[RMDB]
RNA sequence: GGGAACGACUCGAGUAGAGUCGAAAAAUUUCGUAUCUUUGAGCACCACCUUGCAAGUGCCAUAGAAUGACAAUGGCGCUGCCGAGCCAGCAGCACAGGAACACGAACGAAGGUCAACAUUUGUGGGUUCCAUUACUUAACUCUGGAGAAAAAAUGGCUUAUCCCUGGAAUUCGUUCCAGGGAUAAGAAAAGAAACAACAACAACAAC
Reactivity to 2A3 in 0.01 (KOAc 150mM, MgCl2 10mM, bicine 150mM(pH8.5), 24C), signal-to-noise 3, nucleotides 027 to 156: a000u110u110u110c060g010u070a180u050c030u030u060u130g050a010g000c040a010c040c010a020c010c050u030u070g020c060a110a040g000u020g010c010c000a010u040a060g140a160a160u130g020a020c070a100a070u040g010g000c000g000c020u010g020c020c010g010a010g030c020c020a010g010c010a000g050c010a020c010a040g050g000a060a010c020a000c070g030a140a010c010g030a050a020g030g000u040c020a060a080c000a160u070u070u110g050u060g040g010g000u040u000c020c000a020u000u100a070c030u130u120a120a040c010u020c040u090g070g010a050g060a060a040a040a030a010a120u060g010g000
Reactivity to DMS in 0.01 (KOAc 150mM, MgCl2 10mM, bicine 150mM(pH8.5), 24C), signal-to-noise 2, nucleotides 027 to 156: a060u000u000u000c060g030u000a090u000c060u000u010u000g020a090g020c020a050c030c040a090c040c020u000u000g010c030a130a060g000u000g010c010c010a080u000a100g050a140a190u000g020a090c090a040a110u010g000g010c060g050c010u010g010c000c050g000a100g060c050c020a080g030c070a080g030c060a110c050a090g010g020a070a100c010a050c030g000a050a060c030g010a060a090g010g010u020c010a030a060c030a100u000u000u010g010u010g040g030g000u000u020c040c030a120u020u000a080c060u000u000a060a020c040u010c040u020g020g000a140g040a010a020a090a090a100a100u000g000g000

An RNA of 207 nucleotides, treated with 2A3 and DMS and read out base by base. For 2A3 the reverse transcriptase was SuperScript II with manganese. For DMS the reverse transcriptase was MarathonRT.